Background:
The data come from the RNA Mapping Database (RMDB), library OK1LIB. Chemical mapping of a 177-nucleotide RNA with DMS and 2A3. Reactivities are given for positions 27 through 126.
RNA sequence: GGGAACGACUCGAGUAGAGUCGAAAAUAAGAGCUAGUACAUCGUUGCUAGAAAUUUCAAGAUGGUACAAAAACAGGAAGGAAUCAGCGAAGGAGGAUACACUUAGCACGUUUAGAAAUAAAAUUUCCGUCUACCUCUGAUUCGUCAGAGGUAGACGAAAAGAAACAACAACAACAAC
Reactivity to DMS in 0.01 (KOAc 150mM, MgCl2 10mM, bicine 150mM(pH8.5), 24C), signal-to-noise 2, nucleotides 027 to 126: u000a100a210g000a130g050c010u010a080g060u000a000c060a220u020c210g000u020u000g040c110u000a000g000a070a170a130u050u010u000c010a040a150g030a260u010g050g040u000a060c090a090a060a080a200a070c090a050g000g030a000a000g040g020a110a030u000c070a060g000c000g010a140a190g000g000a070g000g000a010u000a040c020a070c070u150u030a000g000c150a030c090g000u000u000u000a130g000a060a110a020u000a050a000a010a300u000u030u000c000
Reactivity to 2A3 in 0.01 (KOAc 150mM, MgCl2 10mM, bicine 150mM(pH8.5), 24C), signal-to-noise 3, nucleotides 027 to 126: u250a020a010g010a010g050c010u040a050g000u010a000c020a200u050c140g110u150u000g000c010u000a010g170a070a020a000u130u140u120c020a010a020g030a070u040g060g000u140a070c050a010a180a000a050a030c060a040g070g000a050a030g060g000a070a030u030c070a040g050c050g110a020a010g010g050a030g020g000a040u010a130c030a000c020u040u040a010g000c010a020c140g040u000u040u210a090g090a010a040a060u220a070a140a060a040u010u010u030c010
Annotation:
For DMS the reverse transcriptase was MarathonRT.